[RMDB]
RNA sequence: GGGAACGACUCGAGUAGAGUCGAAAAGAUCGGAAACAGCAGCAGGUGAGUCCGCCUUAUGUGAAGGAUCGGCUGAAACACGAGGAAAUACUGAGCCAACGCAAGACGGUAGCCGAACAGUAGCUACAAAACGCUUACGUGUUCGCACGUAAGCGAACAUAUAUCAAGGCUUCGGCCUUGAUAUAUGAAAAGAAACAACAACAACAAC
Reactivity to 2A3 in 0.01 (KOAc 150mM, MgCl2 10mM, bicine 150mM(pH8.5), 24C), signal-to-noise 8, nucleotides 027 to 156: g040a040u090c040g020g050a070a050a040c030a030g060c010a000g010c010a010g020g030u050g040a070g060u050c040c040g040c010c020u130u100a160u150g100u070g080a070a020g030g010a050u100c060g040g000c020u030g030a100a070a010c060a020c080g040a050g030g050a050a060a020u160a050c050u050g030a010g020c020c010a050a030c050g040c060a040a030g050a030c050g050g010u030a010g010c010c010g020a020a010c030a040g070u130a020g010c020u030a030c040a020a100a030a020c020g010c000u000u010a000c000g000u010g020u070u060c170g010c070a000c000g000u000a000a000g000c000g000a000a000
Reactivity to DMS in 0.01 (KOAc 150mM, MgCl2 10mM, bicine 150mM(pH8.5), 24C), signal-to-noise 4, nucleotides 027 to 156: g000a080u000c030g030g000a120a070a100c040a090g010c040a060g000c090a100g000g030u000g000a110g010u000c050c030g010c010c000u000u000a080u000g030u010g010a060a110g000g030a100u000c050g010g030c020u000g010a160a050a100c050a110c050g010a120g010g000a060a070a110u000a110c050u000g010a070g010c030c020a060a110c020g010c030a060a100g000a080c040g000g030u010a050g010c010c030g010a050a080c080a100g010u010a030g010c030u030a110c060a050a050a060a130c050g010c000u000u010a000c020g010u000g000u000u010c300g040c020a010c010g020u000a020a010g010c000g010a030a040
The record gives the reactivity of an RNA of 207 nucleotides to 2A3 and DMS. Values cover nucleotides 27 to 156. For DMS the reverse transcriptase was MarathonRT. The DMS profile rests on 9,634 reads. The reactions ran in a buffer of 150 mM KOAc, 10 mM MgCl2 and 150 mM bicine (pH 8.5), at 24 C. For 2A3, 10,197 sequencing reads were counted.